[RMDB]
RNA sequence: GGGAACGACUCGAGUAGAGUCGAAAAGCAAGGGCUCGAAGAGGGAUCCCCCGGGAAACCUACUCGAGCGAGGCGGAGAUCGAGCGCCACUACGUGCGCGGCGACCUGAAGUUGCUUCGGCUUCUUCGAUAACAUCUUCGUUCGCGAAGAUGUUAUCAAAAGAAACAACAACAACAAC
Reactivity to DMS in 0.01 (KOAc 150mM, MgCl2 10mM, bicine 150mM(pH8.5), 24C), signal-to-noise 1, nucleotides 027 to 126: g020c030a090a130g010g000g000c020u030c000g010a040a050g010a050g000g000g010a220u010c030c000c020c270c300g000g000g010a020a020a220c040c000u000a020c000u000c000g010a020g000c010g000a040g010g020c050g000g000a060g000a030u000c020g000a300g010c030g030c020c000a030c170u000a140c270g000u010g050c040g020c020g000g020c010g010a050c060c010u010g010a030a150g000u010u000g010c010u000u000c080g010g000c020u000u010c000u000u000c300